[RMDB]
RNA sequence: GGGAACGACUCGAGUAGAGUCGAAAAGAAAGAAAGAAAUUAGCUCGCCAGUUAUCGAGGUCUGUCCCCACACGACAGAUAAUCGGGUGCAACUCCCGCCCCUUUUCCGAGGGUCAUCGGAACCAAAAAAACUCAGGCAACUUCGGUUGCCUGAGAACACCAAUGAGUUGUUCGCAACUCAUUGGUGAAAAGAAACAACAACAACAAC
Reactivity to 2A3 in 0.01 (KOAc 150mM, MgCl2 10mM, bicine 150mM(pH8.5), 24C), signal-to-noise 1, nucleotides 027 to 156: g030a000a060a000g040a020a180a030g050a080a100a090u140u070a090g030c020u020c030g020c000c060a070g040u120u090a110u160c050g020a050g010g010u030c030u030g060u000c060c010c060c000a050c000a000c030g060a000c000a010g030a030u050a080a110u120c000g010g000g000u010g010c000a010a020c030u030c040c000c000g000c000c000c000c010u090u150u090u000c000c000g000a000g010g010g020u040c040a010u000c000g000g000a000a000c010c020a000a000a000a020a050a040a090c000u010c000a000g000g010c000a000a010c000u080u110c210g030g000u010u000g000c000c000u010g000a000g000a000a010
This 207-nucleotide RNA was probed chemically with 2A3. The RNA was probed in 150 mM KOAc, 10 mM MgCl2 and 150 mM bicine (pH 8.5) at 24 C.